RNA sequence: GGGAACGACUCGAGUAGAGUCGAAAAGGGCAACGAUGGUGUUGUACUGGAUAAAUUGCUGUCCCAAACCGGCAUGGUCACUUUUGACCCCGGCUAUGUAAGCACCGGUUCUACUGAAUCGAAGAUCAGAACCUCUUUCAUUCGUGAAAGAGGUUCUAAAAGAAACAACAACAACAAC
Reactivity to 2A3 in 0.01 (KOAc 150mM, MgCl2 10mM, bicine 150mM(pH8.5), 24C), signal-to-noise 1, nucleotides 027 to 126: g010g000g030c030a060a000c040g240a240u260g060g140u250g030u050u070g000u020a250c000u020g100g000a010u080a090a130a050u150u130g020c020u070g040u060c000c010c110a050a000a010c040c000g000g010c170a160u080g020g000u000c010a000c140u270u210u180u290g030a030c060c000c000c000g010g030c010u210a160u170g120u100a040a020g000c000a020c070c060g000g010u020u040c020u100a110c030u100g060a030a000u040c040g010a070a000g010a070u130c060
Reactivity to DMS in 0.01 (KOAc 150mM, MgCl2 10mM, bicine 150mM(pH8.5), 24C), signal-to-noise 2, nucleotides 027 to 126: g000g030g000c040a030a050c080g000a110u060g030g030u030g010u000u000g020u010a100c070u000g010g000a300u000a050a060a130u000u000g000c030u010g010u010c030c010c000a040a110a120c010c010g000g010c300a120u010g000g000u000c000a100c300u000u000u020u000g010a030c000c030c010c000g010g000c040u000a050u000g010u000a210a070g000c050a070c300c010g000g000u000u000c000u000a060c190u030g000a020a010u000c000g000a160a090g000a120u020c120
The data come from the RNA Mapping Database (RMDB), library OK2TST. This 177-nucleotide RNA was probed chemically with 2A3 and DMS. The DMS profile rests on 1,083 reads. For DMS the reverse transcriptase was MarathonRT. 2A3 adducts were read by reverse transcription with SuperScript II with manganese.